[RMDB]
RNA sequence: GGGAACGACUCGAGUAGAGUCGAAAAUGCGCGAGUGAUCGAGUGAUCGGUACGUACUCAGGCCACUAGGCCGAUCGUACAGUACUGGUACGGCGCGUACGCGCACGGCCGGCCAGAGAGGAUCCGAACCUCAGUUUCGAUUCGUCGAAACUGAGGUAAAAGAAACAACAACAACAAC
Reactivity to DMS in 0.01 (KOAc 150mM, MgCl2 10mM, bicine 150mM(pH8.5), 24C), signal-to-noise 2, nucleotides 027 to 126: u010g020c040g020c000g050a170g030u000g000a110u010c020g000a120g010u010g000a040u000c010g000g040u000a020c010g000u020a040c030u010c290a180g030g000c000c020a200c270u010a110g020g000c010c000g000a060u020c160g000u000a000c010a090g000u000a080c060u020g030g010u000a090c030g010g000c010g030c010g040u000a050c080g030c060g000c030a170c040g000g010c140c000g010g010c010c010a030g000a160g000a140g030g000a080u000c030c020g010a110
Reactivity to 2A3 in 0.01 (KOAc 150mM, MgCl2 10mM, bicine 150mM(pH8.5), 24C), signal-to-noise 1, nucleotides 027 to 126: u070g010c060g000c040g000a100g100u100g020a300u120c020g020a040g170u170g080a050u020c000g100g000u010a020c020g010u020a020c010u070c120a050g060g020c040c010a110c260u300a190g010g000c000c000g000a060u090c060g000u000a010c030a040g030u030a070c020u050g000g000u040a100c000g040g000c040g000c010g010u090a050c050g010c010g000c050a020c030g010g000c000c000g060g020c000c020a030g020a010g010a000g070g000a040u070c030c050g020a050
An RNA of 177 nucleotides, treated with DMS and 2A3 and read out base by base. Reactivities are rounded to 0.1 and cut off at 0 and 3. For DMS the reverse transcriptase was MarathonRT. For 2A3, 1,685 sequencing reads were counted.